[RMDB]
Structure probing data (DMS and 2A3) for a 207-nucleotide construct. The RNA was probed in 150 mM KOAc, 10 mM MgCl2 and 150 mM bicine (pH 8.5) at 24 C.

RNA sequence: GGGAACGACUCGAGUAGAGUCGAAAAGAAAAAAUGUGGACCUGAUCAUAGUUGAGUGUGUCUGCCCCAUGCUUGCAUUUAUGAUAUUGGAAACAGGAAGGGUGAGAUUGGAAACAGUCCAUUUCUGCCCAGAGCCCACUCUGCAGCAUGUAACAGCUAGUUCCAUUAGUUUCGACUAAUGGAACUAAAAAGAAACAACAACAACAAC
Reactivity to DMS in 0.01 (KOAc 150mM, MgCl2 10mM, bicine 150mM(pH8.5), 24C), signal-to-noise 3, nucleotides 027 to 156: g010a000a030a060a040a040a120u000g010u020g010g010a100c010c020u000g000a150u000c020a050u000a080g050u010u000g000a090g020u010g010u000g010u010c030u000g020c040c040c170c000a030u000g000c020u020u010g030c060a090u010u010u000a050u020g000a060u000a110u010u000g000g010a100a060a090c080a050g000g010a070a070g000g020g030u000g010a080g010a110u000u000g010g000a180a100a170c070a050g000u000c010c030a100u000u000u000c010u000g000c040c020c010a090g010a120g030c030c010c000a050c030u010c100u010g020c020a040g010c030a050u010g010u000a060a080c070a100g010c090
Reactivity to 2A3 in 0.01 (KOAc 150mM, MgCl2 10mM, bicine 150mM(pH8.5), 24C), signal-to-noise 3, nucleotides 027 to 156: g060a000a050a000a010a010a010u160g000u050g010g000a010c010c040u030g060a090u030c050a060u050a100g050u080u100g070a070g070u060g010u020g010u010c020u040g030c000c000c000c000a000u020g000c030u160u090g000c000a070u050u210u130a080u190g100a010u020a050u090u170g030g020a080a080a020c050a040g000g100a060a060g060g000g000u040g160a070g010a010u010u030g010g020a040a170a090c050a090g100u030c000c000a010u050u100u050c020u040g010c000c000c000a000g010a010g030c010c040c000a040c000u080c030u050g000c010a000g000c000a010u020g040u120a070a010c010a050g020c030
2A3 adducts were read by reverse transcription with SuperScript II with manganese.